[RMDB]
RNA sequence: GGGAACGACUCGAGUAGAGUCGAAAAGAUCUCUUUGGGGAUACAGUAGCAGUGCAGAGUAGAAAGGAGAGAUGGGUUCUGGACGCCAUGGAAGGAAACUUAGUAGCUUGUGGUCAGGCUGAAAGUGUCCGCUGUCUGAAUUCGUUCAGACAGCGGAAAAAGAAACAACAACAACAAC
Reactivity to DMS in 0.01 (KOAc 150mM, MgCl2 10mM, bicine 150mM(pH8.5), 24C), signal-to-noise 1, nucleotides 027 to 126: g000a110u000c020u010c000u000u030u040g010g050g000g020a020u030a000c020a130g000u000a100g000c110a140g020u000g020c070a040g000a030g030u000a050g020a080a040a100g040g000a000g000a030g000a110u010g000g020g000u000u000c090u030g000g000a070c120g010c030c000a000u000g000g000a200a090g040g060a050a070a230c070u020u000a140g000u010a000g030c000u000u010g020u060g050g000u010c020a040g000g010c030u000g020a020a050a030g080u000g050
Reactivity to 2A3 in 0.01 (KOAc 150mM, MgCl2 10mM, bicine 150mM(pH8.5), 24C), signal-to-noise 1, nucleotides 027 to 126: g000a000u000c060u010c000u040u130u070g000g000g090g000a000u000a000c000a050g150u270a010g150c040a000g000u000g180c010a060g110a000g120u060a060g250a220a090a000g050g000a040g050a050g070a040u030g050g000g010u160u000c000u000g000g030a000c050g060c020c000a070u040g020g000a000a080g000g160a140a000a040c000u030u050a040g000u010a020g020c000u050u020g040u060g070g030u100c070a070g000g000c000u030g050a190a060a000g050u030g000
An RNA of 177 nucleotides, treated with DMS and 2A3 and read out base by base. The reactions ran in a buffer of 150 mM KOAc, 10 mM MgCl2 and 150 mM bicine (pH 8.5), at 24 C. Values cover nucleotides 27 to 126. For DMS the reverse transcriptase was MarathonRT. Source: RMDB library OK1LIB, as collected in RNAgym.